[RMDB]
RNA sequence: GGGAACGACUCGAGUAGAGUCGAAAAGAAAGAAAGAAAGAAAGGUAUGAAGUCCUAUUCACGCCCGAUAGGAUAAACUUCAUAUUGAUCGUGUAUGUGCUAACGCACAUACACGAAUGCGCAUGCAGAACUGCAUGCAUGAACAUAGGGUGUGCAAAUACCGGAUUUACUUCGGUAAAUCCGGUAUAAAAGAAACAACAACAACAAC
Reactivity to 2A3 in 0.01 (KOAc 150mM, MgCl2 10mM, bicine 150mM(pH8.5), 24C), signal-to-noise 1, nucleotides 027 to 156: g040a030a080a000g070a080a100a000g050a070a060a000g060a120a060a060g030g000u020a020u030g000a000a000g020u000c000c010u010a010u000u020c080a010c060g000c020c020c000g010a000u000a000g000g020a050u050a120a170a020c000u000u000c000a000u020a010u000u100g030a020u010c000g000u010g010u000a000u000g000u000g000c020u100a160a040c170g000c010a000c010a000u010a000c000a010c000g000a000a000u020g000c010g000c000a000u010g000c010a000g070a300a040c260u030g000c000a010u000g000c000a010u110g010a050a030c030a070u130a120g000g000g000u000g020u060g030c010a080a180
About this RNA:
The record gives the reactivity of an RNA of 207 nucleotides to 2A3. The data come from the RNA Mapping Database (RMDB), library OK3TST. The 2A3 profile rests on 1,104 reads.